[RMDB]
RNA sequence: GGGAACGACUCGAGUAGAGUCGAAAAUGACGUUAAACUGCUGACUCAUACCUACUGACACCGGUUGCUCAACAGGCUGUGUGGGACAAUAGAAUAACAAGGCUGUCAAUUUGAGCUUGACGGCUGCAAAACCUGCAGUACUUCGGUACUGCAGGAACAAGGACCACUAGUUCGCUAGUGGUCCUUGAAAAGAAACAACAACAACAAC
Reactivity to DMS in 0.01 (KOAc 150mM, MgCl2 10mM, bicine 150mM(pH8.5), 24C), signal-to-noise 1, nucleotides 027 to 156: u000g030a230c040g000u020u020a080a120a200c020u040g000c060u000g030a080c050u000c020a080u000a070c060c030u000a300c050u000g000a050c100a050c040c090g060g060u010u000g020c010u000c060a010a060c060a060g000g000c040u000g030u000g060u000g020g040g000a120c050a050a050u010a060g000a180a100u000a060a070c060a090a150g030g010c010u000g060u030c010a050a070u000u030u010g000a110g000c300u000u000g000a070c030g010g000c020u010g040c070a050a050a090a090c000c000u000g010c010a020g050u000a010c000u000u020c300g110g030u000a000c000u000g000c000a000g020g010a000a000
Reactivity to 2A3 in 0.01 (KOAc 150mM, MgCl2 10mM, bicine 150mM(pH8.5), 24C), signal-to-noise 2, nucleotides 027 to 156: u050g070a020c050g010u030u080a110a090a080c070u110g020c010u030g040a070c000u050c040a040u080a090c000c010u040a060c070u070g040a050c030a060c060c050g050g010u040u070g030c030u040c040a040a040c000a050g010g010c100u060g030u000g000u030g070g030g030a020c030a050a060u090a090g080a040a070u090a150a020c060a100a040g040g000c000u000g010u010c010a000a010u120u090u130g030a030g050c010u010u010g000a000c000g000g010c010u020g020c020a030a120a000a020c000c000u000g000c000a000g000u000a000c000u000u120c170g080g010u000a000c000u000g000c000a000g000g000a000a000